[RMDB]
RNA sequence: GGGAACGACUCGAGUAGAGUCGAAAAGAUAUGGAGCUAGUGGCUAGCUAGUGGUCGGAAACGACCACAAACUAGAACUACCACUUGGACCUCCUAAGUCAAACUCAACGAGUUCGCUCGUUGAGAACCGUCCAAGAUAGUUCGCUAUCUUGGACGGAAAAGAAACAACAACAACAAC
Reactivity to 2A3 in 0.01 (KOAc 150mM, MgCl2 10mM, bicine 150mM(pH8.5), 24C), signal-to-noise 1, nucleotides 027 to 126: g040a010u090a020u190g010g010a020g000c040u000a000g000u000g080g010c010u000a010g000c000u030a030g000u010g000g000u030c010g000g000a090a050a010c000g010a000c000c000a010c000a000a000a000c020u000a000g010a070a060c050u150a070c080c000a000c000u030u120g100g080a160c000c000u000c000c010u030a090a000g010u030c060a100a020a110c020u010c000a000a010c000g020a000g030u100u100c210g100c120u000c000g010u000u000g010a000g010a010a020
Reactivity to DMS in 0.01 (KOAc 150mM, MgCl2 10mM, bicine 150mM(pH8.5), 24C), signal-to-noise 2, nucleotides 027 to 126: g000a060u010a300u000g010g010a040g000c040u000a000g000u000g030g000c010u000a000g050c010u000a300g060u000g000g000u000c010g000g000a070a120a180c000g010a000c010c000a000c000a030a010a130c000u000a000g010a080a030c100u000a300c000c000a020c000u000u000g050g010a120c210c020u010c030c000u000a050a130g000u000c000a080a100a140c000u000c020a010a000c000g000a000g010u000u010c290g020c000u000c000g010u000u000g000a010g000a030a110